[RMDB]
RNA sequence: GGGAACGACUCGAGUAGAGUCGAAAAUCCGGGCCGCAACGGACACCACCGAGGUAAUAACCAACACAAUGCUCACGGCGGUGAGAACGCAAUUGUGCCCAAUAAUCACAACAUUGGCACCGCCGGCCUGACCUGAGAAGUUCGCUUCUCAGGUCAGAAAAGAAACAACAACAACAAC
Reactivity to DMS in 0.01 (KOAc 150mM, MgCl2 10mM, bicine 150mM(pH8.5), 24C), signal-to-noise 1, nucleotides 027 to 126: u020c020c020g000g040g020c010c000g010c050a050a130c090g000g020a030c050a070c050c060a060c040c100g010a100g010g020u000a030a060u020a140a170c070c020a050a020c170a120c140a070a050u010g020c070u030c130a280c020g000g000c000g000g000u000g020a020g020a130a210c270g000c090a010a070u000u000g010u000g020c010c020c000a080a080u040a050a170u000c020a060c130a020a080c150a050u000u010g010g010c020a050c010c000g000c010c000g000g010c150
Reactivity to 2A3 in 0.01 (KOAc 150mM, MgCl2 10mM, bicine 150mM(pH8.5), 24C), signal-to-noise 1, nucleotides 027 to 126: u020c000c000g080g040g020c010c000g080c020a070a010c010g090g000a020c050a070c000c010a000c000c020g020a020g040g010u000a100a050u080a140a080c020c080a150a010c030a030c040a130a140u200g010c030u050c060a120c000g010g010c000g020g000u000g000a080g020a080a030c070g000c040a010a100u110u160g070u050g000c010c000c090a030a070u250a030a070u140c050a050c000a120a070c000a200u060u000g030g020c010a000c000c000g050c000c000g020g000c010